Annotation: Structure probing data (2A3 and DMS) for a 177-nucleotide construct. For 2A3, 1,218 sequencing reads were counted. The DMS profile rests on 1,128 reads. Conditions: 150 mM KOAc, 10 mM MgCl2 and 150 mM bicine (pH 8.5), 24 C.
RNA sequence: GGGAACGACUCGAGUAGAGUCGAAAAACUUUUUGCUGCGCAAGUGGUGCACGACGAUCGAGGCGGCAGUGGAGGCGAAGACUGCGGACGGUUACACCCUGCGCCUCUUCGUGAUCGCCUUCACGAAGUCAUCGUCCCUAUUCGUAGGGACGAUGACAAAAGAAACAACAACAACAAC
Reactivity to 2A3 in 0.01 (KOAc 150mM, MgCl2 10mM, bicine 150mM(pH8.5), 24C), signal-to-noise 1, nucleotides 027 to 126: a000c040u160u140u010u110u130g040c080u050g000c000g000c100a060a200g050u040g170g030u040g070c070a030c100g070a000c000g070a110u050c030g000a020g050g000c010g000g020c070a000g040u000g050g020a030g000g020c000g050a050a040g010a020c040u020g000c040g050g020a010c050g020g020u020u100a060c060a100c000c010c000u040g030c000g000c030c000u000c000u000u010c010g070u020g040a060u060c000g000c000c000u060u080c050a060c020g050a080a000
Reactivity to DMS in 0.01 (KOAc 150mM, MgCl2 10mM, bicine 150mM(pH8.5), 24C), signal-to-noise 1, nucleotides 027 to 126: a100c060u000u000u000u010u020g000c050u000g010c070g020c110a110a070g100u000g010g000u000g080c070a130c050g040a150c040g000a050u010c120g000a050g020g000c010g000g020c050a090g000u010g000g000a050g000g000c000g000a140a050g050a120c090u000g000c120g010g000a080c110g020g000u000u010a110c180a090c030c020c000u000g020c100g000c000c030u000c010u010u000c010g010u010g000a020u000c070g000c030c010u020u000c020a050c080g010a070a170